RNA sequence: GGGAACGACUCGAGUAGAGUCGAAAAAUCAGUCUCCAUGGCUUCCAUCCUGGGCCUCUUCUUCGGGGGCCCUCCCUCUUCGUUCCUCUUCUUUGAUCUCAACAUUCCGAGGACGUUUCCCAGCCAGUACGGUCUCCGUUCGCGGAGACCAAAAGAAACAACAACAACAAC
Reactivity to DMS in 0.01 (KOAc 150mM, MgCl2 10mM, bicine 150mM(pH8.5), 24C), signal-to-noise 5, nucleotides 027 to 129: a000u020c070a100g000u020c030u020c050c050a070u020g040g090c030u010u030c020c080a100u040c040c070u020g030g040g000c090c030u030c050u030u090c060u020u050c170g030g000g020g020g080c040c040c010u030c000c000c000u010c050u000u030c020g030u010u060c010c030u020c060u060u020c030u010u070u020g050a130u050c030u030c030a090a070c100a190u080u060c150c040g000a070g000g010a110c000g000u030u030u030c020c000c000a160g020c070c100a100g000u020a060c090
Reactivity to 2A3 in 0.01 (KOAc 150mM, MgCl2 10mM, bicine 150mM(pH8.5), 24C), signal-to-noise 5, nucleotides 027 to 129: a000u100c050a000g030u010c000u010c050c010a030u020g010g000c000u070u030c040c010a080u020c020c050u020g000g000g000c020c000u030c020u210u060c020u090u100c090g000g000g000g000g010c000c000c000u010c000c000c000u010c040u020u010c030g010u030u000c010c000u060c010u030u000c050u030u040u080g090a090u040c020u020c030a030a140c010a140u190u050c020c010g000a010g010g000a060c010g040u000u030u060c000c010c010a000g070c040c030a000g050u090a070c100